[RMDB]
RNA sequence: GGGAACGACUCGAGUAGAGUCGAAAAAUGCGAGCAAGGCGGUGUUCAGCUACCAUCAUGUUAACCGCAAGCUGACCGCGCUGGGCUACCUGUACCAGUCCGACGUGGUGCUGCACACGUAUAACCGACGAUACUUUGGAUUCGUCCAAAGUAUCGUAAAAGAAACAACAACAACAAC
Reactivity to DMS in 0.01 (KOAc 150mM, MgCl2 10mM, bicine 150mM(pH8.5), 24C), signal-to-noise 6, nucleotides 027 to 126: a070u010g040c020g010a080g020c070a100a120g000g010c030g010g010u010g020u010u000c030a040g010c060u010a150c120c090a080u020c140a110u010g000u000u010a110a100c060c030g020c040a110a110g010c020u010g010a070c030c010g010c020g010c020u000g020g010g010c010u000a070c100c080u000g000u000a070c260c070a020g000u000c030c020g010a030c020g000u000g000g010u010g000c040u000g000c040a120c080a090c090g000u000a060u000a090a190c050c060g010
Reactivity to 2A3 in 0.01 (KOAc 150mM, MgCl2 10mM, bicine 150mM(pH8.5), 24C), signal-to-noise 4, nucleotides 027 to 126: a000u060g000c030g010a030g010c050a060a030g180g000c010g010g020u040g080u110u130c020a020g020c010u060a090c050c040a100u150c040a060u120g050u120u110a060a040c050c020g030c010a010a030g000c010u050g060a020c010c010g000c000g000c020u020g000g000g000c020u040a070c030c060u140g050u120a090c040c030a010g000u000c000c000g000a020c000g030u030g000g040u050g060c000u030g000c010a040c000a000c030g040u050a060u040a180a060c030c030g050
Chemical mapping of a 177-nucleotide RNA with DMS and 2A3. It was measured as part of the RMDB library OK2TST. Conditions: 150 mM KOAc, 10 mM MgCl2 and 150 mM bicine (pH 8.5), 24 C. For 2A3, 6,418 sequencing reads were counted. DMS adducts were read by reverse transcription with MarathonRT.